[RMDB]
The record gives the reactivity of an RNA of 177 nucleotides to DMS and 2A3.
It was measured as part of the RMDB library OK2TST.
2A3 adducts were read by reverse transcription with SuperScript II with manganese.
RNA sequence: GGGAACGACUCGAGUAGAGUCGAAAAUGGCCAACGCCAACUGGCACGCUUUGUCCGGCUUUACCACACACGCCAACACCACGAUCCAGCGCCAGAUCGUUACCGACCAUAGAGACCUGCUGCAUAACCAUUUUAUUUUAUUCGUAAAAUAAAAUGGAAAAGAAACAACAACAACAAC
Reactivity to DMS in 0.01 (KOAc 150mM, MgCl2 10mM, bicine 150mM(pH8.5), 24C), signal-to-noise 9, nucleotides 027 to 126: u010g010g010c010c040a080a130c140g000c030c030a100a110c140u010g000g020c030a080c120g000c050u000u000u000g010u010c050c040g000g000c050u000u000u010a080c030c030a060c080a070c090a080c100g010c030c030a060a090c100a080c060c050a070c040g010a050u010c020c030a090g010c050g010c020c030a100g010a040u010c040g000u000u000a060c060c030g000a060c040c030a080u000a080g010a130g010a060c040c020u000g010c040u010g010c060a080u010a090a150
Reactivity to 2A3 in 0.01 (KOAc 150mM, MgCl2 10mM, bicine 150mM(pH8.5), 24C), signal-to-noise 6, nucleotides 027 to 126: u070g040g000c030c010a060a020c060g040c030c010a060a090c080u050g030g000c030a020c050g040c020u080u060u100g040u050c020c010g010g010c020u060u080u070a080c030c000a030c000a000c000a000c080g010c020c010a030a020c030a020c040c000a020c030g010a010u030c010c020a030g020c030g030c050c000a020g020a050u040c020g010u020u040a040c020c020g040a040c000c020a030u060a090g080a010g030a060c000c010u030g020c000u050g010c040a060u070a120a050